[RMDB]
RNA sequence: GGGAACGACUCGAGUAGAGUCGAAAACAUGGUAUAUAACCUGAUGACUUUUCUAUUUCACUAAAAUUAGAUGAGGUGCUUGCACUAUUCACUGCACAGAGGCGUAAUCCUCCAAUAUGAAAAUAAACUACUACAAGUACUUCGGUACUUGUAGUAGAAAAGAAACAACAACAACAAC
Reactivity to 2A3 in 0.01 (KOAc 150mM, MgCl2 10mM, bicine 150mM(pH8.5), 24C), signal-to-noise 2, nucleotides 027 to 126: c010a040u110g060g000u040a180u030a030u040a190a060c000c000u050g100a140u050g060a080c030u000u120u030u010c020u070a090u020u140u050c090a050c050u150a180a120a170a200u080u080a040g050a120u050g040a010g050g060u010g000c040u030u090g000c010a000c050u020a060u070u070c050a030c050u060g000c040a030c010a080g040a000g010g000c040g030u010a040a090u040c000c000u000c010c030a120a060u170a120u190g080a050a090a000a000u090a030a080a030
Reactivity to DMS in 0.01 (KOAc 150mM, MgCl2 10mM, bicine 150mM(pH8.5), 24C), signal-to-noise 2, nucleotides 027 to 126: c080a070u010g010g030u000a090u000a060u000a110a040c030c010u010g010a090u000g010a070c060u000u010u010u010c020u000a090u000u000u000c080a140c090u010a060a080a060a080u000u000a040g020a080u010g000a090g020g010u000g000c080u030u000g030c080a030c040u000a040u010u000c060a090c070u000g020c020a070c110a090g020a050g010g000c070g000u010a070a150u000c010c020u000c050c120a050a220u030a060u020g000a060a120a060a010u000a050a050a160

Structure probing data (2A3 and DMS) for a 177-nucleotide construct. Reactivities are rounded to 0.1 and cut off at 0 and 3. For 2A3, 1,322 sequencing reads were counted. The DMS profile rests on 1,066 reads. It was measured as part of the RMDB library RFMREP.